[RMDB]
RNA sequence: GGGAACGACUCGAGUAGAGUCGAAAAGAUAUGGAACUCGACGAAGUACCAAGACUUAGACAAUCGGAAACGAUCGAGUCUGGUACAGAGAGUUCCUAAGUCAAAGACGAACGUUCGCGUUCGUCAACAGUACUUCAGCCUUCGGGCUGAAGUACUGAAAAGAAACAACAACAACAAC
Reactivity to DMS in 0.01 (KOAc 150mM, MgCl2 10mM, bicine 150mM(pH8.5), 24C), signal-to-noise 1, nucleotides 027 to 126: g000a080u000a300u000g000g000a000a000c000u000c000g000a190c220g020a150a100g000u000a000c020c000a080a100g010a000c000u000u020a090g040a090c300a190a000u000c000g030g000a130a080a220c010g000a050u010c010g000a000g000u010c000u010g000g010u000a000c000a040g020a130g000a030g000u000u010c000c000u020a000a090g000u000c070a080a170a120g000a030c020g000a000a000c000g000u000u000c230g010c010g020u000u000c000g000u000c000a030a130
Reactivity to 2A3 in 0.01 (KOAc 150mM, MgCl2 10mM, bicine 150mM(pH8.5), 24C), signal-to-noise 1, nucleotides 027 to 126: g010a030u130a070u100g000g000a010a000c010u010c000g210a190c020g080a300a010g000u000a000c010c020a140a010g010a000c010u010u030a170g110a210c140a130a080u020c010g010g090a080a070a120c060g050a080u040c030g010a000g000u020c010u010g000g000u010a010c040a040g010a010g020a010g020u000u020c000c000u010a080a000g090u060c050a130a020a190g000a000c010g020a010a000c020g010u080u080c280g000c000g250u000u050c060g000u000c010a000a040